[RMDB]
An RNA of 177 nucleotides, treated with DMS and 2A3 and read out base by base. The RNA was probed in 150 mM KOAc, 10 mM MgCl2 and 150 mM bicine (pH 8.5) at 24 C. The DMS profile rests on 2,562 reads. DMS adducts were read by reverse transcription with MarathonRT. Source: RMDB library OK1LIB, as collected in RNAgym. Values cover nucleotides 27 to 126.
RNA sequence: GGGAACGACUCGAGUAGAGUCGAAAACUUUGGUGAGGCCCUAUCUAGUAUAGCAAUCCACCAAGCAGGUGACUUCACACAAUUCAGGUUCUCAUAGAAAAUGCGCCCUGACUUGACAGGUAUGGUCGAUGCAUAUCCACUUCGGUGGAUAUGCAUCAAAAGAAACAACAACAACAAC
Reactivity to DMS in 0.01 (KOAc 150mM, MgCl2 10mM, bicine 150mM(pH8.5), 24C), signal-to-noise 3, nucleotides 027 to 126: c010u020u050u000g000g000u050g000a050g000g010c300c300c000u030a060u010c000u050a090g000u030a020u000a010g010c100a060a300u030c100c010a040c030c000a040a000g040c090a040g030g000u050g000a000c070u000u030c010a090c040a190c030a010a160u000u010c040a070g000g030u010u070c020u000c000a080u000a100g000a090a050a070a060u000g030c130g000c300c010c020u000g000a000c100u000u000g000a090c010a080g000g000u010a030u020g000g000u030c030
Reactivity to 2A3 in 0.01 (KOAc 150mM, MgCl2 10mM, bicine 150mM(pH8.5), 24C), signal-to-noise 4, nucleotides 027 to 126: c030u040u030u070g030g000u030g040a080g050g020c010c020c000u010a020u070c060u060a040g110u080a050u030a050g000c030a060a040u040c000c000a000c000c000a000a010g090c060a010g000g070u030g050a060c010u070u010c050a020c000a000c020a100a120u060u060c020a010g070g000u070u040c040u000c010a050u100a070g260a050a150a020a040u100g000c000g010c020c000c000u010g030a030c000u030u090g010a010c020a080g000g100u100a090u140g030g010u020c060